[RMDB]
RNA sequence: GGGAACGACUCGAGUAGAGUCGAAAAUACCAAAGCCAACACAAACAGAAAAAUUGCCCAUAGAAUAUUCAGUACAAGCAUGUUAAUCAUCAAUGCGCUGAUAUGAGAGAGCAGGACUUUCAACGGCUAGGGGAAUCAGUUUCGACUGAUUCCCCUAAAAAGAAACAACAACAACAAC
Reactivity to DMS in 0.01 (KOAc 150mM, MgCl2 10mM, bicine 150mM(pH8.5), 24C), signal-to-noise 2, nucleotides 027 to 126: u030a180c000c000a100a160a190g020c000c130a060a020c090a140c240a120a070a050c040a190g000a110a000a060a030a110u000u050g000c000c000c020a080u040a070g000a290a000u020a050u020u000c000a030g020u000a150c020a040a020g010c190a000u000g020u050u040a020a040u100c020a010u010c040a090a060u050g020c070g030c010u000g000a010u000a020u030g000a110g000a050g010a060g000c010a050g030g000a230c100u010u010u040c010a100a120c070g000g000c030
Reactivity to 2A3 in 0.01 (KOAc 150mM, MgCl2 10mM, bicine 150mM(pH8.5), 24C), signal-to-noise 2, nucleotides 027 to 126: u270a060c010c000a040a000a000g040c000c010a040a020c020a020c050a070a240a060c060a010g170a040a020a030a000a020u120u010g000c000c010c000a090u060a050g180a140a000u030a090u150u140c040a000g000u070a080c040a100a000g000c010a000u010g130u100u100a170a040u150c100a020u080c020a000a170u030g000c000g000c000u080g070a010u020a060u000g130a170g000a020g000a010g020c040a020g080g010a040c020u040u000u000c060a080a000c050g000g000c000